Chemical mapping of a 177-nucleotide RNA with DMS and 2A3.
[RMDB]
RNA sequence: GGGAACGACUCGAGUAGAGUCGAAAAGAUAUGGACGAUACUGGAGGUAAGGGUUCCUAUGAAGAGCGUCGGAAACGACGCUUGGAGGAACCAGCAGCAGCUACCGUUGAAAGUAUCGUCCUAAGUCCAUGAGUUAUACCUUCGGGUAUAACUCAUGAAAAGAAACAACAACAACAAC
Reactivity to DMS in 0.01 (KOAc 150mM, MgCl2 10mM, bicine 150mM(pH8.5), 24C), signal-to-noise 4, nucleotides 027 to 126: g010a060u000a230u010g010g000a020c010g000a010u000a000c000u000g000g000a060g010g030u000a040a170g030g030g010u000u000c000c010u020a250u000g010a190a200g000a000g010c010g020u000c000g000g000a100a070a160c000g020a010c000g010c000u010u010g000g010a030g010g010a000a010c000c010a070g010c030a150g020c210a120g010c060u000a010c010c000g020u010u000g000a160a110a030g010u000a000u000c010g000u000c000c000u000a020a100g010u000c060
Reactivity to 2A3 in 0.01 (KOAc 150mM, MgCl2 10mM, bicine 150mM(pH8.5), 24C), signal-to-noise 3, nucleotides 027 to 126: g030a000u080a040u170g000g000a000c010g000a000u000a000c000u000g010g050a060g040g000u100a080a230g210g000g020u000u060c050c010u300a300u190g060a020a020g020a010g000c000g000u000c010g020g000a050a080a000c020g000a010c030g000c010u000u010g000g010a000g010g010a010a000c010c000a000g020c050a010g000c020a030g050c040u020a020c000c040g150u250u050g030a000a000a000g000u000a000u000c000g010u000c000c000u000a010a000g000u020c020

The 2A3 profile rests on 6,520 reads.